[RMDB]
RNA sequence: GGGAACGACUCGAGUAGAGUCGAAAAGAUAUGGAUCACACUCUGAGGUGUCCGCUGACUCGGAAACGAGGUGGAGGACACUACCCACCAGAGGUGAUCCUAAGUCAAACGUCUCUUCGGAGACGAACUUACUAUUAUAGUUCGCUAUAAUAGUAAGAAAAGAAACAACAACAACAAC
Reactivity to 2A3 in 0.01 (KOAc 150mM, MgCl2 10mM, bicine 150mM(pH8.5), 24C), signal-to-noise 5, nucleotides 027 to 126: g040a030u080a030u190g000g000a000u000c010a010c030a080c050u000c000u010g020a020g020g010u010g010u000c000c010g000c070u080g030a050c010u000c000g030g030a090a080a050c010g000a010g010g030u040g020g060a050g000g000a000c000a000c000u000a010c020c030c020a090c030c000a000g000a000g000g000u000g000a000u000c000c000u010a070a010g050u010c040a090a080a110c020g000u000c000u000c000u020u080c300g160g000a000g000a000c000g000a010a000
Reactivity to DMS in 0.01 (KOAc 150mM, MgCl2 10mM, bicine 150mM(pH8.5), 24C), signal-to-noise 9, nucleotides 027 to 126: g010a040u010a300u010g000g000a010u000c000a010c010a150c010u000c010u000g000a120g010g010u000g000u000c000c000g000c020u000g000a060c000u000c000g010g000a120a090a200c010g010a010g000g000u000g010g000a060g000g010a020c010a010c010u000a020c040c050c090a300c090c000a010g010a010g010g010u000g000a010u000c000c000u000a010a040g000u000c030a110a110a230c020g000u000c000u000c000u000u010c180g020g000a010g010a010c000g010a020a090
This 177-nucleotide RNA was probed chemically with 2A3 and DMS. 2A3 adducts were read by reverse transcription with SuperScript II with manganese. It was measured as part of the RMDB library TTRDEL. For DMS, 23,773 sequencing reads were counted. The 2A3 profile rests on 54,967 reads. For DMS the reverse transcriptase was MarathonRT.